Background
This 207-nucleotide RNA was probed chemically with DMS and 2A3. Values cover nucleotides 27 to 156. The DMS profile rests on 5,574 reads. It was measured as part of the RMDB library M2RFPK. 2A3 adducts were read by reverse transcription with SuperScript II with manganese. DMS adducts were read by reverse transcription with MarathonRT.
[RMDB]
RNA sequence: GGGAACGACUCGAGUAGAGUCGAAAAAGUUAGGUUCGCUAUGGUGCAACUCUUUAAGGCAAUAACGAACUAAUUCUUAGCAAGUAAUGGAGAAAUGCCAGGGUCACUAUCUAGCCAUAAUAGUGCUGUAAGUGACUUAGAUUCGUCUAAGUCACAACUUCUCUCAUAACUUCGGUUAUGAGAGAAGAAAAGAAACAACAACAACAAC
Reactivity to DMS in 0.01 (KOAc 150mM, MgCl2 10mM, bicine 150mM(pH8.5), 24C), signal-to-noise 3, nucleotides 027 to 156: a110g010u010u000a080g010g030u010u000c040g030c030u000a020u000g000g030u020g010c030a100a080c090u000c100u010u010u000a090a090g030g030c020a110a060u000a030a060c030g000a050a050c010u000a060a080u000u010c050u010u000a110g030c040a040a160g010u000a070a060u020g010g010a120g000a070a120a080u000g020c000c020a090g010g030g050u000c040a040c020u000a050u000c050u000a100g020c030c050a120u000a060a060u000a070g010u000g030c030u000g010u000a060a120g030u000g010a010c000u000u000a010g000a050u000u000c300g020u000c010u000a000a010g020u010c010a000c010a030a090
Reactivity to 2A3 in 0.01 (KOAc 150mM, MgCl2 10mM, bicine 150mM(pH8.5), 24C), signal-to-noise 6, nucleotides 027 to 156: a000g070u070u060a050g010g050u030u050c020g010c030u020a010u070g080g040u060g050c060a130a190c050u070c070u170u190u150a110a040g030g000c010a040a050u060a090a030c050g050a010a000c020u020a020a040u060u040c060u060u060a030g040c060a140a040g040u180a080a090u130g070g030a060g040a070a100a020u060g010c020c000a050g020g010g000u030c000a000c020u030a050u120c030u030a020g030c000c000a030u040a150a040u050a130g070u040g050c060u030g030u120a190a080g000u000g000a000c000u000u000a000g000a000u020u020c100g020u000c160u000a000a000g000u010c010a000c000a000a000